[RMDB]
RNA sequence: GGGAACGACUCGAGUAGAGUCGAAAAGAUAUGGAGGCAUACUAGCUUGGACCCUCACCCAUCGGAAACGAUGGUUGAGGCUAGCUACUAUGCCUCCUAAGUCAAAACAGGGGCUUCGGCCCCUGAACCACUCCUCUUAGUUCGCUAAGAGGAGUGGAAAAGAAACAACAACAACAAC
Reactivity to DMS in 0.01 (KOAc 150mM, MgCl2 10mM, bicine 150mM(pH8.5), 24C), signal-to-noise 1, nucleotides 027 to 126: g000a050u010a300u000g000g010a000g010g000c000a020u000a050c110u000a000g010c020u000u000g070g010a130c300c000c000u020c000a000c020c000c000a000u010c010g000g000a080a110a270c020g000a000u010g010g010u000u000g020a060g000g030c000u020a000g000c030u000a030c160u000a030u000g000c000c010u000c000c010u000a000a070g010u000c030a130a100a080a160c030a000g000g000g010g000c000u000u010c300g060g020c000c010c000c000u000g000a030a080

The record gives the reactivity of an RNA of 177 nucleotides to DMS. The RNA was probed in 150 mM KOAc, 10 mM MgCl2 and 150 mM bicine (pH 8.5) at 24 C. For DMS the reverse transcriptase was MarathonRT.